[RMDB]
RNA sequence: GGGAACGACUCGAGUAGAGUCGAAAACGCAAGUUCCGUCACAAUAGCGCCGGAUACGCUUUAGGCGUCUACGCAAAAACUCCUUCUGAUGAUAUUUUCAGUGCAGCUUUCUGCCAGCUCUUCGGAAGCGCUACAUUAGAUUCGUCUAAUGUAGCGCAAAAGAAACAACAACAACAAC
Reactivity to DMS in 0.01 (KOAc 150mM, MgCl2 10mM, bicine 150mM(pH8.5), 24C), signal-to-noise 2, nucleotides 027 to 126: c130g000c140a160a080g010u000u030c000c010g050u000c050a080c120a150a120u000a070g020c030g010c090c010g000g020a090u000a040c140g000c000u000u010u000a160g030g010c030g040u000c050u010a070c040g040c040a050a110a040a060a100c040u000c000c040u000u000c020u010g000a030u010g000a080u000a080u010u000u010u010c060a020g000u000g020c070a070g000c150u010u000u000c020u000g000c030c000a080g010c030u000c060u020u000c000g000g020a120a110
Reactivity to 2A3 in 0.01 (KOAc 150mM, MgCl2 10mM, bicine 150mM(pH8.5), 24C), signal-to-noise 2, nucleotides 027 to 126: c070g000c030a060a060g010u080u010c000c010g060u070c060a040c020a090a300u090a110g000c050g010c030c060g120g000a080u090a130c060g000c000u160u110u120a160g070g000c000g060u050c080u100a020c000g050c040a040a010a000a030a170c020u000c020c000u040u090c000u050g050a080u050g000a020u040a090u170u130u100u190c050a010g000u020g100c030a040g040c070u090u160u030c010u050g000c000c000a030g020c030u080c000u120u050c020g040g000a080a010
Structure probing data (DMS and 2A3) for a 177-nucleotide construct.
2A3 adducts were read by reverse transcription with SuperScript II with manganese.
The DMS profile rests on 1,074 reads.
The 2A3 profile rests on 1,341 reads.